RNA sequence: GGGAACGACUCGAGUAGAGUCGAAAAUUUCGGACCAUGUGUUUCGGGGGAAGGCAUGGCUACAUAACGCAUUUCAAAUGGGUCGAAUUGGGGCGUAGAGCGGGGACGGUCCACUGGAGAAUCGACCGUUAUGGUAUAUCUUCGGAUAUACCAUAACAAAAGAAACAACAACAACAAC
Reactivity to 2A3 in 0.01 (KOAc 150mM, MgCl2 10mM, bicine 150mM(pH8.5), 24C), signal-to-noise 6, nucleotides 027 to 126: u070u060u080c040g020g030a020c010c010a040u050g090u010g030u060u090u160c080g000g000g010g020g010a030a010g020g000c020a030u040g030g000c020u080a040c020a110u180a130a030c050g050c090a060u010u160u160c070a080a100a080u140g080g000g000u020c020g030a030a030u090u060g010g000g010g010c020g040u060a040g010a010g080c050g010g000g010g010a010c010g020g050u020c010c010a030c060u070g050g020a100g020a090a090u050c040g020a010c000c030
Reactivity to DMS in 0.01 (KOAc 150mM, MgCl2 10mM, bicine 150mM(pH8.5), 24C), signal-to-noise 6, nucleotides 027 to 126: u010u010u000c050g020g020a090c020c050a060u010g020u010g000u000u000u000c080g010g010g010g010g020a100a090g000g000c050a040u000g000g000c040u000a090c150a070u010a090a100c110g010c060a080u000u000u000c100a050a080a100u000g010g000g010u000c040g000a040a130u000u000g010g000g010g000c060g010u000a060g000a090g010c070g010g000g010g010a070c070g020g000u000c020c040a070c120u010g000g010a110g000a060a090u010c050g000a070c110c070
Source: RMDB library VIROID, as collected in RNAgym. The record gives the reactivity of an RNA of 177 nucleotides to 2A3 and DMS. The RNA was probed in 150 mM KOAc, 10 mM MgCl2 and 150 mM bicine (pH 8.5) at 24 C.